The record gives the reactivity of an RNA of 177 nucleotides to DMS. The reactions ran in a buffer of 150 mM KOAc, 10 mM MgCl2 and 150 mM bicine (pH 8.5), at 24 C. Reactivities are given for positions 27 through 126. For DMS the reverse transcriptase was MarathonRT.
RNA sequence: GGGAACGACUCGAGUAGAGUCGAAAAGAUAUGGAUACAGACAUGAGCAGGCUGUCGGAAACGACAGUAGCUCAACAGCUGUCAUCCUAAGUCAAAAGGACCGAACCAGUUCGCUGGUUCGGUCCAACACAGACGUAUCGUUCGCGAUACGUCUGUGAAAAGAAACAACAACAACAAC
Reactivity to DMS in 0.01 (KOAc 150mM, MgCl2 10mM, bicine 150mM(pH8.5), 24C), signal-to-noise 1, nucleotides 027 to 126: g020a050u000a300u000g030g010a000u020a020c000a020g000a100c040a300u020g000a000g030c010a060g000g060c020u000g000u000c020g000g010a120a040a190c000g020a000c000a020g010u010a000g020c000u010c000a050a040c260a190g060c010u000g000u000c250a000u000c000c000u000a070a140g000u000c020a040a030a070a130g030g020a020c000c000g010a000a000c000c000a000g000u000u040c300g030c000u000g000g000u000u000c010g000g000u000c000c000a060a020